[RMDB]
RNA sequence: GGGAACGACUCGAGUAGAGUCGAAAAAUGCCAAGUCCAAGACCGCGAGGACGCACAAUAGGAAUAGGAACAGGGACGUUCCCUCCACUUAAAUCGAAGGGUAAGCAAAACCCAGGGAACGGCAAAAGGAGUUUGUCACAUUCGUGUGACGAAUUCCAAAAGAAACAACAACAACAAC
Reactivity to DMS in 0.01 (KOAc 150mM, MgCl2 10mM, bicine 150mM(pH8.5), 24C), signal-to-noise 9, nucleotides 027 to 126: a080u020g000c030c030a080a090g000u010c010c030a080a110g010a130c070c070g000c050g010a130g000g010a070c060g010c080a060c130a070a090u020a080g000g010a060a070u010a050g000g000a100a070c090a080g000g000g000a100c020g010u000u000c000c000c000u000c100c060a070c120u010u030a050a090a080u050c150g000a130a090g010g000g010u000a040a100g020c200a080a060a070a060c010c010c000a060g000g000g000a020a020c020g000g010c230a040a040a090a090
Reactivity to 2A3 in 0.01 (KOAc 150mM, MgCl2 10mM, bicine 150mM(pH8.5), 24C), signal-to-noise 9, nucleotides 027 to 126: a010u120g030c000c010a040a020g020u000c020c010a060a030g070a080c020c020g040c030g060a040g020g040a030c020g030c010a070c020a020a140u150a120g070g030a040a080u060a080g030g030a050a040c060a070g050g010g110a010c010g010u010u010c010c000c000u040c020c010a120c050u140u250a080a120a140u150c080g060a090a040g020g000g010u070a090a040g100c050a060a050a040a050c000c000c010a000g010g010g010a020a020c010g020g000c000a040a050a020a080